[RMDB]
RNA sequence: GGGAACGACUCGAGUAGAGUCGAAAAUGAAUGGUCAAAAACUUAAACAUGUUAUUCCUGAACAUGAUGGAUUAAUUACAGAAGUAUUGAGAGAACCAGGCUUCUUCAGACAUCUUAAAGUGAUGCCUGGAGUCUGCUUAUUCGUAAGCAGACUCCAAAAAGAAACAACAACAACAAC
Reactivity to 2A3 in 0.01 (KOAc 150mM, MgCl2 10mM, bicine 150mM(pH8.5), 24C), signal-to-noise 2, nucleotides 027 to 126: u140g180a010a010u000g050g210u050c080a050a000a050a000a000c070u090u080a200a020a020c000a040u040g000u000u000a050u110u070c000c000u040g000a080a030c010a120u140g020a110u030g020g020a000u080u060a000a200u160u090a040c050a030g030a030a090g010u130a260u200u060g030a090g000a050g030a030a030c020c000a010g010g010c000u020u030c000u000u130c130a000g070a030c000a090u010c030u050u150a030a080a070g030u070g060a050u140g040c090c000
Reactivity to DMS in 0.01 (KOAc 150mM, MgCl2 10mM, bicine 150mM(pH8.5), 24C), signal-to-noise 1, nucleotides 027 to 126: u000g080a110a110u040g000g000u010c040a010a060a040a030a140c200u000u000a080a030a130c020a030u010g010u060u000a170u000u000c030c000u050g040a090a020c080a050u000g060a140u030g010g000a080u000u030a030a120u040u000a020c250a060g000a040a100g010u030a070u040u010g000a000g000a040g000a180a100c060c070a030g000g000c000u000u030c040u000u000c080a000g000a000c100a020u000c000u000u010a030a040a120g000u020g000a060u030g000c100c030
Annotation
Conditions: 150 mM KOAc, 10 mM MgCl2 and 150 mM bicine (pH 8.5), 24 C. This 177-nucleotide RNA was probed chemically with 2A3 and DMS. 2A3 adducts were read by reverse transcription with SuperScript II with manganese. As a SHAPE reagent, 2A3 marks flexible, mostly unpaired nucleotides at the ribose 2'-OH.